The record gives the reactivity of an RNA of 170 nucleotides to DMS and 2A3.
The RNA was probed in 150 mM KOAc, 10 mM MgCl2 and 150 mM bicine (pH 8.5) at 24 C.
The 2A3 profile rests on 2,756 reads.
RNA sequence: GGGAACGACUCGAGUAGAGUCGAAAAAUUGUUAAGUCUUCAGAUGUUGUAGACAGCAAUGAAAAUUUAACAUGGCCACUUGUUUUAGAAUGCACUAGGGCAUCCACUUCUGCCGUUAAGUUGCAAACAGCCAGCUGGUUCGCCAGCUGGAAAAGAAACAACAACAACAAC
Reactivity to DMS in 0.01 (KOAc 150mM, MgCl2 10mM, bicine 150mM(pH8.5), 24C), signal-to-noise 4, nucleotides 027 to 129: a000u180u000g030u040u030a080a070g060u000c020u000u080c070a070g000a130u000g020u060u030g050u080a040g010a150c000a040g050c030a120a150u040g000a000a000a000a000u000u000u000a050a010c010a070u030g030g000c010c000a000c300u030u060g030u010u010u000u000a110g010a040a210u090g000c020a050c040u010a100g020g000g000c030a020u010c050c060a090c210u030u050c050u030g050c070c110g000u020u030a010a080g030u000u030g000c050a010a090a240c130a130g030
Reactivity to 2A3 in 0.01 (KOAc 150mM, MgCl2 10mM, bicine 150mM(pH8.5), 24C), signal-to-noise 2, nucleotides 027 to 129: a000u060u050g030u040u010a100a000g000u000c000u000u010c030a000g100a300u090g120u110u030g000u040a020g050a130c000a040g000c000a000a080u000g060a010a060a030a000u130u060u000a000a000c010a000u050g000g000c010c000a030c040u070u110g100u120u150u030u000a010g070a070a030u110g000c000a000c090u040a000g030g000g020c000a000u000c040c000a020c000u120u050c000u000g080c000c000g000u020u000a090a030g000u010u000g010c040a010a010a010c060a050g060